[RMDB]
RNA sequence: GGGAACGACUCGAGUAGAGUCGAAAAUAAAUGAAUGGACUCCUUGGUGGCAGAUACUAUCGCUUACUCAUCUUUGUUUCCCAGUGCCCGGCAAGUAACCAACGCAUAGUAGGAGUUCAGGAGGAGCCUACUGAAUAACUGAAUAGUGUCUACAGGAUACGUCAAAAUGAUUCGUCAUUUUGACGUAAAAAGAAACAACAACAACAAC
Reactivity to DMS in 0.01 (KOAc 150mM, MgCl2 10mM, bicine 150mM(pH8.5), 24C), signal-to-noise 2, nucleotides 027 to 156: u010a070a060a120u000g010a180a130u000g000g010a080c060u010c000c010u000u000g000g010u010g020g010c030a080g000a170u000a050c040u000a080u010c060g010c050u000u000a040c050u000c020a120u000c050u010u000u000g010u000u000u000c000c030c040a230g000u010g000c050c010c040g000g000c040a050a060g000u000a070a100c040c010a060a130c080g020c030a100u000a070g020u000a080g000g020a140g000u020u010c030a040g020g020a150g040g030a150g050c050c010u030a100c080u010g000a080a050u010a040a140c030u000g020a030a050u000a060g030u000g020u010c010u010a100c030a080g000g000a300
Reactivity to 2A3 in 0.01 (KOAc 150mM, MgCl2 10mM, bicine 150mM(pH8.5), 24C), signal-to-noise 3, nucleotides 027 to 156: u160a020a050a040u120g130a040a030u070g020g030a020c040u030c040c010u030u080g060g000u000g020g050c040a020g030a070u110a090c060u080a070u150c030g020c040u020u050a060c010u030c070a130u030c050u060u070u050g050u020u040u040c000c000c000a040g050u040g040c030c020c020g010g000c040a060a070g060u050a050a040c040c040a050a050c080g020c040a040u040a100g010u040a010g010g010a040g000u010u050c020a000g030g050a030g030g020a010g000c000c020u020a020c000u030g050a080a080u110a120a020c010u010g040a010a070u050a100g010u030g030u060c020u060a030c020a040g100g040a070